[RMDB]
The record gives the reactivity of an RNA of 177 nucleotides to DMS and 2A3. For 2A3 the reverse transcriptase was SuperScript II with manganese. For DMS the reverse transcriptase was MarathonRT.

RNA sequence: GGGAACGACUCGAGUAGAGUCGAAAAGAAUGCCCAUUCGUGGGCAUUCCACCGCAGCGAAGCCGAAAGGCAUAUUAUGCGUACGCUGGCGAAAGCCUAAAAAAGCUCCACUUUUCGAAGUGGAGAAUAGAUUGGAAAGAUUCGUCUUUCCAAUCUAAAAAGAAACAACAACAACAAC
Reactivity to DMS in 0.01 (KOAc 150mM, MgCl2 10mM, bicine 150mM(pH8.5), 24C), signal-to-noise 5, nucleotides 027 to 126: g000a020a010u000g000c000c000c000a040u000u010c160g030u000g020g010g010c000a000u000u000c010c050a190c110c020g010c050a070g010c040g000a130a140g020c010c000g000a100a110a150g000g000c010a100u010a060u000u010a080u000g020c070g010u010a100c110g010c110u000g010g020c010g010a100a120a160g010c020c010u000a000a030a070a070a080a130g010c000u000c000c000a010c000u000u000u000u020c170g010a010a010g010u000g000g000a000g000a020a050
Reactivity to 2A3 in 0.01 (KOAc 150mM, MgCl2 10mM, bicine 150mM(pH8.5), 24C), signal-to-noise 3, nucleotides 027 to 126: g000a010a010u010g000c000c010c000a010u030u090c240g080u030g010g010g000c000a000u000u010c000c000a030c000c010g000c010a000g030c020g070a110a030g000c010c000g070a110a030a010g030g000c020a000u010a030u030u050a050u080g040c010g010u070a050c070g020c090u040g030g000c010g040a100a020a010g020c020c030u130a110a120a050a000a000a010g050c000u000c000c000a000c000u010u030u060u100c180g040a010a000g000u000g000g000a000g000a000a000